[RMDB]
RNA sequence: GGGAACGACUCGAGUAGAGUCGAAAAACGAGUCGUACGCGACUCGAAUGGUAUUGUCGGCGUGAAAGAACAAGACGUCACCGGACGCGACCGGGCUAAAAAGCGAAACGUCAUCUACGGAUGACGAAAAACGGACCUGGGUUCGCCCAGGUCCGAAGUCGAUCUACGUGUUCGCACGUAGAUCGACAAAAGAAACAACAACAACAAC
Reactivity to 2A3 in 0.01 (KOAc 150mM, MgCl2 10mM, bicine 150mM(pH8.5), 24C), signal-to-noise 1, nucleotides 027 to 156: a000c010g000a010g000u010c040g000u040a030c270g080c030g110a000c010u010c000g010a040a150u080g010g060u210a160u120u230g200u230c090g000g020c000g010u010g080a110a020a150g070a090a050c070a190a030g080a030c000g000u020c010a010c000c000g030g000a000c000g000c000g000a000c000c010g020g000g020c070u050a000a000a000a000a000g000c010g080a100a000a070c040g000u010c000a000u000c000u000a050c110g170g000a000u000g000a010c000g020a080a000a000a000a000c010g000g000a000c000c000u000g040g010g000u100u030c150g080c060c000c000a050g000g020u050c000c000g000a000a000
This 207-nucleotide RNA was probed chemically with 2A3. Values cover nucleotides 27 to 156. Source: RMDB library M2RFPK, as collected in RNAgym.